[RMDB]
RNA sequence: GGGAACGACUCGAGUAGAGUCGAAAACCGUAGGACCACGGUUUGCCGCAAAGCUUGGAUUUAUGGUCUUCGAAAGAGGACCAUUGUCAGCUUUGACCCGGUAAUUUGUGGUCCUAAACGGAAAACAUACGUGUGUGCUUCGGCACACACGUAUGAACGAUCCGAAUACGUUCGCGUAUUCGGAUCGAAAAGAAACAACAACAACAAC
Reactivity to 2A3 in 0.01 (KOAc 150mM, MgCl2 10mM, bicine 150mM(pH8.5), 24C), signal-to-noise 2, nucleotides 027 to 156: c000c000g010u000a010g000g000a000c000c000a000c020g040g030u050u000u100g010c000c010g010c020a000a000a000g000c000u260u270g180g000a090u280u250u060a020u040g000g020u000c020u020u010c050g110a140a080a070g000a000g000g000a010c010c000a000u000u020g000u010c010a000g000c010u020u000u000g050a080c020c030c010g000g020u030a010a040u000u080u300g000u000g000g000u000c000c010u000a000a000a000c000g040g020a000a080a010a090c000a000u000a000c000g000u000g010u000g000u020g000c010u110u070c300g070g000c000a000c000a000c000a000c010g000u000a000u000g000a000a000